RNA sequence: GGGAACGACUCGAGUAGAGUCGAAAAGAUAUGGAUACCGCCCGGUAGGGAGUGACUCGGAAACGAGUCGACGAAGAACUACCGUAACAAGUAUCCUAAGUCAAAGUUAUCUCUUCGGAGAUAACAACUGAAUAGUGCGGUUCGCCGCACUAUUCAGAAAAGAAACAACAACAACAAC
Reactivity to DMS in 0.01 (KOAc 150mM, MgCl2 10mM, bicine 150mM(pH8.5), 24C), signal-to-noise 1, nucleotides 027 to 126: g010a010u000a300u000g000g000a010u000a000c010c040g010c300c200c000g000g000u010a010g060g060g010a060g090u000g000a000c000u040c000g000g010a210a070a270c000g010a000g020u000c010g000a000c040g010a110a100g000a080a170c040u000a000c000c000g000u000a120a060c200a190a150g000u000a000u000c000c000u000a070a070g000u000c020a040a040a260g000u000u000a000u000c000u060c000u000u000c150g000g010a000g010a010u000a000a040c000a070a210